[RMDB]
RNA sequence: GGGAACGACUCGAGUAGAGUCGAAAAAAUGCAAUCUCAAUCAAAUCUCUGAUAGAUUUUGUUUAAAAAGUCAAACAUGACCAUCAUAUUCUAAAAUGUAUAUGGAAUAACAAAGGACCAAAAAUAGCCAAAACACUCUUAAAGAGGACAAAUGAGAAUGCAAAAUAUUAUUCGUAAUAUUUUGCAUAAAAGAAACAACAACAACAAC
Reactivity to 2A3 in 0.01 (KOAc 150mM, MgCl2 10mM, bicine 150mM(pH8.5), 24C), signal-to-noise 1, nucleotides 027 to 156: a000a000u170g000c010a050a030u020c000u000c010a010a010u040c020a060a070a100u020c000u010c000u040g080a090u110a200g020a030u110u080u150u090g020u030u080u050a070a080a000a040a040g020u000c040a130a100a060c080a140u150g030a020c060c000a000u040c010a020u010a070u130u060c080u130a100a210a270a120u150g000u000a050u000a000u060g000g050a160a130u080a110a000c030a030a060a060g050g000a000c000c030a000a000a090a070a180u040a050g000c000c070a040a060a020a000c020a050c020u000c000u020u060a080a000a060g020a010g040g010a050c040a000a150a010u080g020a010g000a020

Chemical mapping of a 207-nucleotide RNA with 2A3. For 2A3 the reverse transcriptase was SuperScript II with manganese. The reactions ran in a buffer of 150 mM KOAc, 10 mM MgCl2 and 150 mM bicine (pH 8.5), at 24 C. Values cover nucleotides 27 to 156.